An RNA of 177 nucleotides, treated with 2A3 and read out base by base. The reactions ran in a buffer of 150 mM KOAc, 10 mM MgCl2 and 150 mM bicine (pH 8.5), at 24 C. It was measured as part of the RMDB library OK1LIB. The 2A3 profile rests on 578 reads.
[RMDB]
RNA sequence: GGGAACGACUCGAGUAGAGUCGAAAACAUAGCGCAAUACAUCAACAUUGAAGUCGCGUAAUUGUGAACGUUUCGUAUAGCGUUUUUCAAAAUGGCUUAAUGCUUUGCGUUCAUGGAAAAAUACACCUAGUCGUUUGUCGUUCGCGACAAACGACUAAAAAGAAACAACAACAACAAC
Reactivity to 2A3 in 0.01 (KOAc 150mM, MgCl2 10mM, bicine 150mM(pH8.5), 24C), signal-to-noise 1, nucleotides 027 to 126: c020a000u000a040g040c000g080c000a000a040u170a280c130a170u240c040a050a030c000a000u000u120g180a040a000g070u000c000g000c000g080u120a130a300u000u040g000u020g000a000a000c000g000u070u060u100c170g090u140a090u190a120g000c000g000u000u000u000u000u050c030a000a000a070a000u050g040g020c000u030u010a070a000u010g140c000u000u010u010g000c000g000u000u030c000a000u010g000g000a070a040a000a000a000u110a080c010a030c000c000